[RMDB]
RNA sequence: GGGAACGACUCGAGUAGAGUCGAAAAGAUAUGGAUCGGUGAUGGCAGCCUUGAAGUCGGAAACGAUGGAGCUGCAUCCCGAUCCUAAGUCAAAACACAGGCAGGUCGUUCGCGACCUGCCUGUGAACUUAAGAGGACACUUCGGUGUCCUCUUAAGAAAAGAAACAACAACAACAAC
Reactivity to DMS in 0.01 (KOAc 150mM, MgCl2 10mM, bicine 150mM(pH8.5), 24C), signal-to-noise 1, nucleotides 027 to 126: g000a030u010a300u000g010g000a000u000c000g000g000u000g030a050u000g010g010c000a010g000c020c300u000u000g020a090a140g020u000c010g000g040a120a080a190c020g000a000u000g000g000a060g010c000u000g000c000a010u000c000c000c030g010a000u000c000c000u000a030a080g020u000c040a100a030a120a170c010a000c000a030g020g000c010a000g000g020u020c000g040u020u030c220g000c000g040a030c000c000u000g000c040c020u000g000u000g000a010a050